[RMDB]
RNA sequence: GGGAACGACUCGAGUAGAGUCGAAAAUCCUAAGUCUAGCGAUAAGUCCUUGGAUUUAUAAGUAGUUCCUAUCGGAAACGAUAGGAAGCUUAUUGUCAGGACUUUUGACGCUAGAUAUGGAAAAAGCAACUCAAAAUGUUCGCAUUUUGAGUUGCAAGAAACCUUCGUAGUUCGCUACGAAGGUUUCAAAAGAAACAACAACAACAAC
Reactivity to 2A3 in 0.01 (KOAc 150mM, MgCl2 10mM, bicine 150mM(pH8.5), 24C), signal-to-noise 1, nucleotides 027 to 156: u000c000c000u000a100a000g030u000c000u030a000g000c000g050a050u010a080a000g010u000c000c010u070u150g220g000a060u220u300u070a010u050a020a000g030u140a010g050u030u010c000c000u000a010u000c010g030g010a110a060a040c030g000a000u010a010g000g010a000a000g000c010u000u020a010u040u020g020u000c020a030g000g020a000c000u000u000u010u020g000a000c000g000c000u000a000g000a000u000a000u000g000g080a090a220a070a000a000g020c000a000a000c000u000c000a000a000a000a030u010g010u080u170c300g020c190a000u050u010u000u000g000a000g040u000u000g010c000a010a000

This 207-nucleotide RNA was probed chemically with 2A3.
Source: RMDB library RNAMAK, as collected in RNAgym.